[RMDB]
RNA sequence: GGGAACGACUCGAGUAGAGUCGAAAAGAUAUGGAUCCUCAUGGAGCUUUGAUCUCGGAAACGAGGGAGCUCUGUGACAUGGAUCCUAAGUCAAACCAGGCUUUUUGCUUCGGCAAAAAGCCUGGAACUAGAUUAUUCGGUUCGCCGAAUAAUCUAGAAAAGAAACAACAACAACAAC
Reactivity to DMS in 0.01 (KOAc 150mM, MgCl2 10mM, bicine 150mM(pH8.5), 24C), signal-to-noise 1, nucleotides 027 to 126: g000a030u010a300u000g020g000a020u010c000c000u000c000a010u000g010g000a010g010c000u000u000u000g000a060u030c020u000c000g010g000a100a100a160c000g000a000g000g000g000a000g020c000u000c000u000g020u000g000a030c300a110u000g020g010a010u000c000c000u000a020a070g010u000c010a100a130a220c020c020a010g000g010c020u000u000u000u000u000g010c000u000u030c200g020g020c000a000a000a010a000a000g010c000c000u000g010g020a000a080
Reactivity to 2A3 in 0.01 (KOAc 150mM, MgCl2 10mM, bicine 150mM(pH8.5), 24C), signal-to-noise 2, nucleotides 027 to 126: g010a030u090a020u130g000g000a000u010c020c000u010c020a020u030g030g010a030g010c050u300u300u110g080a100u140c000u010c040g040g020a120a090a060c030g020a020g040g000g020a000g000c000u030c010u030g010u000g010a080c150a120u150g020g000a010u060c000c000u010a090a020g050u010c020a030a020a140c000c000a000g040g040c000u040u020u010u020u010g020c000u040u130c270g080g000c010a020a000a020a000a060g000c000c000u010g000g020a010a000

Chemical mapping of a 177-nucleotide RNA with DMS and 2A3. The reactions ran in a buffer of 150 mM KOAc, 10 mM MgCl2 and 150 mM bicine (pH 8.5), at 24 C. For 2A3, 2,131 sequencing reads were counted. The DMS profile rests on 1,270 reads. It was measured as part of the RMDB library TTRDEL.